[RMDB]
RNA sequence: GGGAACGACUCGAGUAGAGUCGAAAAAAUACAAGUUAGACGUAAUACUGUAGGAAUUUAUUAUUUGAUGGCGUAACGAUGCUGCAAUGGCGUAAGACAUCUAACAAGAUCAAGUAAAUUAGCGAGCGUAAUAGGGGUACUUCGGUACCCCUAUUACAAAAGAAACAACAACAACAAC
Reactivity to 2A3 in 0.01 (KOAc 150mM, MgCl2 10mM, bicine 150mM(pH8.5), 24C), signal-to-noise 2, nucleotides 027 to 126: a000a000u210a100c110a130a010g010u060u120a090g050a070c060g030u050a100a070u020a260c030u010g020u070a040g070g050a010a040u010u030u050a110u090u040a020u060u000u010g000a000u000g000g020c010g020u010a030a000c080g020a000u000g010c000u010g020c040a170a270u200g300g000c000g020u010a030a030g100a000c000a000u000c020u000a000a010c000a010a010g000a050u010c000a010a020g000u000a000a090a020u010u070a010g080c020g070a020g060c120
Reactivity to DMS in 0.01 (KOAc 150mM, MgCl2 10mM, bicine 150mM(pH8.5), 24C), signal-to-noise 4, nucleotides 027 to 126: a060a020u010a010c040a050a060g010u010u010a070g010a150c150g000u020a070a090u030a040c010u000g000u010a040g000g000a050a060u030u000u000a090u010u000a010u000u010u010g010a010u010g000g010c300g000u030a070a060c250g010a000u000g000c010u010g000c030a190a120u020g020g020c040g000u000a050a000g030a120c000a010u000c000u000a210a010c020a010a300g000a020u000c000a010a000g000u000a000a030a120u040u000a100g010c100g000a050g000c180